About this RNA:
The record gives the reactivity of an RNA of 207 nucleotides to 2A3.

[RMDB]
RNA sequence: GGGAACGACUCGAGUAGAGUCGAAAAGUGCACAGGGCAGGCCCAGAUGGCUGCUGCCACCAACCUGUGUCAUCCAGGAGUGCCUUUCUCAAGAGCUCUCAGUGCUUAUCUAGCGUUGGCCUGCCCCACCUCGGGUUAAAUCAAAACCUCUUUGGUAUCAUGCGAUUAGGUUCGCCUAAUCGCAUGAAAAAGAAACAACAACAACAAC
Reactivity to 2A3 in 0.01 (KOAc 150mM, MgCl2 10mM, bicine 150mM(pH8.5), 24C), signal-to-noise 2, nucleotides 027 to 156: g160u130g020c090a000c080a090g000g010g020c000a000g010g000c000c000c000a010g020a030u040g030g000c050u120g040c040u080g020c070c020a020c070c020a040a120c020c010u050g000u010g090u090c020a060u070c060c050a020g070g000a020g020u050g010c000c020u030u090u080c130u100c120a060a000g040a020g010c040u060c000u020c040a010g020u040g030c030u230u210a120u070c070u150a040g030c030g070u060u110g000g000c000c010u000g010c010c000c010c000a020c010c030u050c000g000g000g010u040u070a110a160a080u180c090a050a010a060a120c030c040u100c040u090u110u060g070g000u070a060
Source: RMDB library OK3TST, as collected in RNAgym. Values are in units of 0.01, from 0 to 300, in steps of 10.